[RMDB]
RNA sequence: GGGAACGACUCGAGUAGAGUCGAAAAACUGCAGUUCGCUGCAGUAAAAAACCGUAGGCACAGUCACUAUGGUGCUACCCACCUCUUCUUCGAAAGAGGAAGAGAGGCACCACGAAUGACGUGCCUAAACGGAAAAACUCCUCUUUCGAGAGGAGAAGUCUACAAUGCGUUUCGACGCAUUGUAGACAAAAGAAACAACAACAACAAC
Reactivity to 2A3 in 0.01 (KOAc 150mM, MgCl2 10mM, bicine 150mM(pH8.5), 24C), signal-to-noise 1, nucleotides 027 to 156: a000c000u000g000c000a000g000u010u140c150g070c110u020g000c000a010g010u010a060a020a000a000a000a030c010c010g020u000a000g000g000c010a000c130a080g010u000c000a010c050u100a050u040g000g040u010g010c020u060a120c000c160c060a060c000c000u000c000u000u000c010u000u000c000g130a110a070a060g000a000g020g000a030a000g020a030g000a020g000g000c000a000c040c040a000c050g170a100a240u020g020a000c010g020u000g000c000c000u010a010a000a020c000g030g040a120a000a000a050a050c000u010c010c000u000c000u010u200u060c300g080a050g000a000g030g000a000g000a050a010